[RMDB]
RNA sequence: GGGAACGACUCGAGUAGAGUCGAAAAGAGCUUACCCCUGAGAAUCCAGGGCAAGGCUGUUGCAUGGAGGAGGCAGGGUGAAAUUUAGGAAGCUCCUUGACCAUCCUACCUUUUCUCCCCAUCACUUGCAGGUACCACUGUGUCCCGCCGCGUGGGAAAUGCAUCAGUAGUUCGCUACUGAUGCAUUAAAAGAAACAACAACAACAAC
Reactivity to 2A3 in 0.01 (KOAc 150mM, MgCl2 10mM, bicine 150mM(pH8.5), 24C), signal-to-noise 2, nucleotides 027 to 156: g080a000g020c020u050u040a020c010c000c010c000u000g030a060g090a270a120u120c070c000a000g020g000g030c030a070a040g040g000c030u030g100u090u050g040c120a120u180g000g000a020g020g000a020g020g000c000a000g000g020g000u020g040a090a110a070u180u200u150a050g050g010a080a050g100c050u080c000c000u050u090g060a160c010c010a030u020c000c010u050a120c020c000u040u030u120u040c020u030c020c030c000c000a040u050c020a020c060u050u090g020c010a020g030g040u070a040c000c030a060c020u090g000u020g040u100c010c000c000g030c050c020g010c010g020u080g000g030g000a040
Reactivity to DMS in 0.01 (KOAc 150mM, MgCl2 10mM, bicine 150mM(pH8.5), 24C), signal-to-noise 2, nucleotides 027 to 156: g010a050g000c010u000u010a050c090c010c010c060u000g000a190g020a130a130u010c020c030a000g010g020g010c010a030a050g020g050c010u000g020u010u000g000c010a130u000g010g000a040g010g020a110g010g010c010a010g010g020g040u000g000a060a090a160u010u000u000a060g010g000a160a290g040c250u010c010c020u000u000g000a120c130c020a020u000c000c000u000a030c030c000u010u000u000u000c020u000c030c010c060c030a140u000c020a070c020u010u010g010c000a060g040g030u000a050c010c020a070c080u000g010u000g020u000c000c000c020g020c070c080g010c080g000u010g020g010g000a080